[RMDB]
RNA sequence: GGGAACGACUCGAGUAGAGUCGAAAAACACUCCAUUUGGCCAGGUGAAAGUUGGUGAACUUGGAGCAUGGAUUGGUCGUCGUAACAAGAGUCCACAAUCUUUCACUGCUCUUUGCUCAAGAGCGUGCGAUUGGGGGAGGUUCGCCUCCCCCAAUCGAAAAGAAACAACAACAACAAC
Reactivity to DMS in 0.01 (KOAc 150mM, MgCl2 10mM, bicine 150mM(pH8.5), 24C), signal-to-noise 1, nucleotides 027 to 126: a090c100a120c050u000c020c020a080u000u010u020g000g020c020c090a070g000g000u010g000a080a060a110g000u010u040g030g040u000g010a030a080c040u000u000g000g000a190g000c070a090u020g000g000a130u010u000g020g000u010c030g000u000c040g000u000a030a080c140a040a120g000a070g000u000c020c020a070c080a020a040u010c040u000u000u000c020a010c030u000g040c000u000c000u010u000u000g030c180u000c100a070a020g020a020g010c010g010u000g030
Reactivity to 2A3 in 0.01 (KOAc 150mM, MgCl2 10mM, bicine 150mM(pH8.5), 24C), signal-to-noise 1, nucleotides 027 to 126: a000c040a010c000u050c010c030a050u020u030u070g140g000c060c030a060g060g090u090g110a170a020a040g090u170u020g080g020u060g000a060a060c030u030u050g020g000a010g000c040a030u090g010g100a070u040u090g020g020u020c030g020u040c050g010u070a050a030c010a110a050g060a010g100u010c020c000a000c040a050a040u090c000u050u150u040c050a050c030u080g000c010u020c010u000u040u230g060c070u080c070a030a000g000a000g000c030g000u010g020
This 177-nucleotide RNA was probed chemically with DMS and 2A3.
Reactivities are given for positions 27 through 126.
2A3 adducts were read by reverse transcription with SuperScript II with manganese.
For DMS, 967 sequencing reads were counted.